[RMDB]
Structure probing data (DMS and 2A3) for a 177-nucleotide construct. DMS adducts were read by reverse transcription with MarathonRT. The DMS profile rests on 735 reads.
RNA sequence: GGGAACGACUCGAGUAGAGUCGAAAAGAGUCACACUUCGGUGUGACUCAAAUAAGCUGACCAGCUAUGAGGUCUACAUCGUCAUGCACAAAAAGAAUAAAAAAACCCUAAUCUUCGGAUUAGGGAAGCCUAGUAGUUAGUUCGCUAACUACUAGGCAAAAGAAACAACAACAACAAC
Reactivity to DMS in 0.01 (KOAc 150mM, MgCl2 10mM, bicine 150mM(pH8.5), 24C), signal-to-noise 1, nucleotides 027 to 126: g000a010g000u000c000a000c000a000c000u000u000c170g020g000u000g020u030g020a000c000u000c020a000a090a090u010a080a100g020c070u000g020a070c050c050a150g020c000u010a030u000g010a090g000g000u020c020u000a100c140a110u000c150g000u000c040a040u020g020c050a150c220a050a030a110a110a020g000a080a040u000a000a020a040a120a100a040a040c000c010c000u010a000a010u000c000u000u010c200g050g020a000u000u000a020g000g000g000a010a000
Reactivity to 2A3 in 0.01 (KOAc 150mM, MgCl2 10mM, bicine 150mM(pH8.5), 24C), signal-to-noise 2, nucleotides 027 to 126: g020a000g010u000c000a000c020a000c020u040u150c260g050g010u000g000u000g000a000c020u000c000a010a000a000u000a000a000g040c020u000g030a030c020c030a000g010c040u130a130u180g100a080g070g040u030c070u090a030c040a230u070c030g050u010c000a020u030g050c070a020c050a080a060a120a070a010g250a110a070u250a180a090a020a030a000a040a050c000c020c010u000a000a000u000c020u100u090c240g040g000a000u000u000a000g000g000g000a010a000